[RMDB]
RNA sequence: GGGAACGACUCGAGUAGAGUCGAAAAUUGGCUGCCGUUACCGCCUCCAUUGCCGCCCAGCAUCGCCAGCGUUUGGCCGCCCUGGAGUUGCUGUUGCGCUGCACUGCCUCCUCCGCCACCCAGCGCCGAUAGUGCGUACGUUCGCGUACGCACUAUCAAAAGAAACAACAACAACAAC
Reactivity to DMS in 0.01 (KOAc 150mM, MgCl2 10mM, bicine 150mM(pH8.5), 24C), signal-to-noise 2, nucleotides 027 to 126: u020u010g020g000c030u000g020c020c020g040u000u000a080c070c010g030c030c010u030c030c020a100u010u030g000c010c040g020c030c070c030a060g000c050a040u030c020g020c000c040a030g030c090g000u000u020u040g010g000c030c030g000c090c010c020u010g020g000a140g000u000u040g020c010u000g000u010u000g000c030g000c030u020g020c060a050c050u000g010c030c020u000c030c000u010c040c040g000c000c040a100c010c010c010a080g000c080g000c090c080
Reactivity to 2A3 in 0.01 (KOAc 150mM, MgCl2 10mM, bicine 150mM(pH8.5), 24C), signal-to-noise 5, nucleotides 027 to 126: u110u090g050g020c040u030g030c000c020g050u040u080a070c030c020g020c010c010u010c000c010a080u040u130g010c000c010g020c000c010c000a010g020c000a030u050c010g020c030c010a040g020c030g040u040u070u110g060g000c020c030g010c000c000c000u020g030g020a040g000u050u070g020c020u020g020u150u090g020c040g000c020u020g020c010a010c040u050g010c010c000u020c000c010u010c020c000g010c000c000a060c010c010c000a030g030c020g000c040c010
The record gives the reactivity of an RNA of 177 nucleotides to DMS and 2A3. For DMS, 5,672 sequencing reads were counted. DMS (dimethyl sulfate) methylates the pairing face of unpaired adenines and cytosines. The reactions ran in a buffer of 150 mM KOAc, 10 mM MgCl2 and 150 mM bicine (pH 8.5), at 24 C. For 2A3, 7,136 sequencing reads were counted.